RNA sequence: GGGAACGACUCGAGUAGAGUCGAAAAGAUAUGGACCCUGAACUACUUCCGAAACACGCGAAGAACUUAUAGGCUCGGAAACGAGCCUAUAAGGGAGCGUGAGAUAGCUGAAGCAGGGUCCUAAGUCCUUAGUUCCUAGGUUCGCCUAGGAACUAAGAAAAGAAACAACAACAACAAC
Reactivity to DMS in 0.01 (KOAc 150mM, MgCl2 10mM, bicine 150mM(pH8.5), 24C), signal-to-noise 1, nucleotides 027 to 126: g000a080u000a170u000g010g010a010c000c020c010u020g030a090a010c100u000a300c010u010u030c030c050g010a230a140a070c000a000c000g000c040g000a200a230g000a220a290c000u020u010a000u010a000g000g040c010u030c000g000g010a060a070a120c000g000a020g030c000c010u000a010u000a000a010g020g000g000a040g010c000g040u000g000a030g000a100u010a190g000c300u010g020a030a040g000c000a010g020g010g010u010c000c000u000a000a090g000u000c030